[RMDB]
RNA sequence: GGGAACGACUCGAGUAGAGUCGAAAAUCUCAGCCCCUCCACCUUGGGGUGCCCUAUUCGGAGCACUGCAGUUCCCGAUAGAAAGGCUAAGCACUUCGCAAUGAAGUAAGGUGGGACUUUUCCUUCGCUUGUCUAAGCAGUUCGCUGCUUAGACAAGAAAAGAAACAACAACAACAAC
Reactivity to DMS in 0.01 (KOAc 150mM, MgCl2 10mM, bicine 150mM(pH8.5), 24C), signal-to-noise 1, nucleotides 027 to 126: u000c020u000c000a300g010c000c000c010c000u000c000c000a060c030c010u000u010g000g010g020g050u000g020c000c000c000u000a130u000u000c240g030g010a080g000c020a060c150u020g020c220a140g000u000u000c030c030c040g020a040u000a010g010a100a130a080g010g010c010u000a070a060g000c100a110c010u000u000c000g010c150a150a130u010g000a010a010g010u000a010a020g000g010u010g000g000g000a100c150u000u000u000u000c040c020u000u000c160g000
Reactivity to 2A3 in 0.01 (KOAc 150mM, MgCl2 10mM, bicine 150mM(pH8.5), 24C), signal-to-noise 2, nucleotides 027 to 126: u000c000u000c010a010g000c020c020c000c010u030c020c000a020c010c020u010u030g000g000g000g060u070g000c000c000c000u010a030u000u040c000g010g010a060g000c070a060c300u300g010c100a050g010u060u020c000c000c000g020a000u020a020g090a020a080a000g010g010c020u010a030a050g060c020a020c060u020u010c030g010c170a140a300u300g000a010a010g010u060a000a020g000g000u000g010g010g000a010c020u060u140u090u140c020c050u070u090c060g000